[RMDB]
RNA sequence: GGGAACGACUCGAGUAGAGUCGAAAAGAUAUGGACGGAUCCGAGAAGAGUGUCCGUUGAAAACAUGAAAUCGGAAACGAUUUCAUGUUGGAGGACACAUCUUCGUUUGACGAUCCGUCCUAAGUCACACUUAGUUAUGGUUCGCCAUAACUAAGUGAAAAGAAACAACAACAACAAC
Reactivity to DMS in 0.01 (KOAc 150mM, MgCl2 10mM, bicine 150mM(pH8.5), 24C), signal-to-noise 9, nucleotides 027 to 126: g020a040u000a300u000g000g000a010c000g000g010a010u000c010c010g000a140g020a020a010g010a050g010u000g010u000c000c000g000u010u020g000a240a110a020a010c000a000u000g000a010a000a010u000c000g000g000a150a100a200c010g000a020u000u000u000c000a000u000g000u000u000g000g010a090g010g010a010c000a000c000a070u000c000u000u000c000g010u000u010u010g010a240c300g000a010u000c000c010g000u000c000c000u000a000a060g010u000c030a280
Reactivity to 2A3 in 0.01 (KOAc 150mM, MgCl2 10mM, bicine 150mM(pH8.5), 24C), signal-to-noise 5, nucleotides 027 to 126: g020a020u080a050u140g010g000a010c000g000g000a010u010c030c040g100a090g000a140a000g030a010g000u010g000u000c000c000g010u070u040g030a020a020a000a010c000a000u000g010a010a010a000u010c010g010g020a060a030a070c020g000a010u000u010u010c000a010u000g000u000u000g000g020a020g000g000a000c000a000c000a300u000c000u020u010c010g030u050u110u270g060a030c020g000a000u000c000c000g000u000c000c000u010a010a010g010u010c010a010
Conditions: 150 mM KOAc, 10 mM MgCl2 and 150 mM bicine (pH 8.5), 24 C. Chemical mapping of a 177-nucleotide RNA with DMS and 2A3. Reactivities are given for positions 27 through 126. The DMS profile rests on 23,595 reads. For 2A3, 40,433 sequencing reads were counted.